The record gives the reactivity of an RNA of 177 nucleotides to 2A3 and DMS. DMS (dimethyl sulfate) methylates the pairing face of unpaired adenines and cytosines. The RNA was probed in 150 mM KOAc, 10 mM MgCl2 and 150 mM bicine (pH 8.5) at 24 C. For DMS, 4,954 sequencing reads were counted. For DMS the reverse transcriptase was MarathonRT.

[RMDB]
RNA sequence: GGGAACGACUCGAGUAGAGUCGAAAAGAUAUGGACCGUAACAAGCGCUUAAGUUAUCGGAAACGAUAACGGAGGAACUACGCUUGCCCGGUCCUAAGUCAAAGCCCAGAGCUUCGGCUCUGGGCAACAUUUAUUCCAUCUUCGGAUGGAAUAAAUGAAAAGAAACAACAACAACAAC
Reactivity to 2A3 in 0.01 (KOAc 150mM, MgCl2 10mM, bicine 150mM(pH8.5), 24C), signal-to-noise 4, nucleotides 027 to 126: g000a000u010a010u050g010g000a000c010c010g030u020a070a050c020a010a000g000c220g020c210u040u030a030a020g000u010u000a010u010c000g030g000a020a010a000c000g010a000u010a000a010c020g000g000a020g000g050a160a300c180u300a180c300g000c000u010u000g000c010c010c000g000g000u000c000c000u000a030a000g000u000c010a140a150a050g000c020c010c020a000g000a000g000c200u290u290c300g140g030c010u000c000u000g010g000g000c000a010a000
Reactivity to DMS in 0.01 (KOAc 150mM, MgCl2 10mM, bicine 150mM(pH8.5), 24C), signal-to-noise 5, nucleotides 027 to 126: g000a040u000a220u010g000g010a000c000c000g010u000a120a150c010a000a000g010c000g000c010u000u000a130a200g010u000u000a000u000c000g000g000a070a060a100c000g020a010u000a000a010c000g020g020a110g000g010a250a080c130u020a150c020g000c000u000u000g020c060c240c020g000g000u000c000c000u000a010a070g000u000c020a080a110a150g010c000c000c000a020g000a020g020c010u000u010c230g030g020c000u000c000u000g000g010g010c000a000a010